[RMDB]
RNA sequence: GGGAACGACUCGAGUAGAGUCGAAAAUGACCCUCUCAAGGUAGCGUAAUACCUAGCCGCUUAAUUGGCGGCUCGCAUGAAGGUUCAACGAGAGUCCCACUGUCCCCACAUUCAGCCCCGUGAAAUUCACAUACUAAACGUUCGCGUUUAGUAUGUGAAAAGAAACAACAACAACAAC
Reactivity to DMS in 0.01 (KOAc 150mM, MgCl2 10mM, bicine 150mM(pH8.5), 24C), signal-to-noise 1, nucleotides 027 to 126: u020g000a130c010c010c010u040c100u000c020a160a020g000g050u000a030g010c160g010u000a100a080u000a010c050c010u010a070g000c000c000g050c000u010u010a120a080u000u030g020g000c010g000g000c000u000c130g000c150a090u010g010a050a050g010g010u000u020c140a100a110c050g000a130g000a090g020u000c030c010c000a090c130u010g000u000c020c010c000c020a060c140a050u000u000c060a100g010c040c000c000c050g030u020g000a070a040a100u010u020
Reactivity to 2A3 in 0.01 (KOAc 150mM, MgCl2 10mM, bicine 150mM(pH8.5), 24C), signal-to-noise 1, nucleotides 027 to 126: u110g010a020c000c000c000u000c000u010c010a010a050g070g000u020a010g000c120g050u130a200a080u000a090c000c000u030a020g000c010c020g100c020u080u100a210a070u210u290g000g000c000g020g000c040u020c000g010c000a060u100g060a060a020g040g020u080u100c030a070a040c060g010a000g010a010g180u050c000c080c030a030c030u010g070u050c000c000c050c000a010c020a010u090u060c010a030g030c010c000c000c000g040u030g070a050a010a010u020u000